[RMDB]
RNA sequence: GGGAACGACUCGAGUAGAGUCGAAAACGCCGCACUGCCCACCGACGCGGGGGUCUACGUGUGCCGCGCCCGCAACGCGGCCGGCGAGGCCUACGCGGCGGCCGCCGUCACCGUGCUGGAGCCGCCGCCCGACUAGAUGGUUCGCCAUCUAGUCGGGAAAAGAAACAACAACAACAAC
Reactivity to DMS in 0.01 (KOAc 150mM, MgCl2 10mM, bicine 150mM(pH8.5), 24C), signal-to-noise 1, nucleotides 027 to 126: c120g040c030c020g000c100a140c060u000g020c040c010c030a190c130c040g000a030c110g010c000g010g000g020g000g020u000c010u000a050c050g010u000g000u010g000c000c000g020c000g010c030c040c280g010c150a070a160c020g010c030g000g010c010c040g000g010c010g010a110g000g000c000c000u000a120c090g000c030g010g030c010g000g000c070c020g000c040c010g010u000c060a090c100c080g000u010g000c020u010g000g010a210g010c000c030g020c000c040g020